The record gives the reactivity of an RNA of 207 nucleotides to 2A3. For 2A3 the reverse transcriptase was SuperScript II with manganese. Source: RMDB library VIROID, as collected in RNAgym. For 2A3, 905 sequencing reads were counted.
[RMDB]
RNA sequence: GGGAACGACUCGAGUAGAGUCGAAAAACGUCGGCGAUGUUCGGCUCUCUCCUCCUCCGUAAAGAUUCUUUUCUUAAUCUCUUUCGGUGGUAGCCUCGAGCCGCCAUCCACAUCCAUGCUCUCCUCGGCUUUUCGCUUCUUUUGGGGAGUCGCCGCGGAUUUUAGUUCGGUUCGCCGAACUAAAAUCAAAAGAAACAACAACAACAAC
Reactivity to 2A3 in 0.01 (KOAc 150mM, MgCl2 10mM, bicine 150mM(pH8.5), 24C), signal-to-noise 2, nucleotides 027 to 156: a000c060g060u120c000g020g000c020g000a010u010g010u110u100c010g010g030c000u000c000u000c010u030c020c000u000c000c000u000c000c000g070u090a030a050a020g010a040u070u140c040u130u300u180u050c060u130u250a120a120u050c040u010c020u100u060u010c000g050g000u040g000g090u170a020g000c040c050u070c050g000a000g000c000c000g020c050c020a050u040c020c000a160c020a130u060c040c020a020u030g000c000u000c000u010c000c000u010c010g020g070c000u080u080u290u300c090g000c000u100u130c030u130u300u210u170g000g000g010g010a000g010u000c000g020c000c010g000c020g020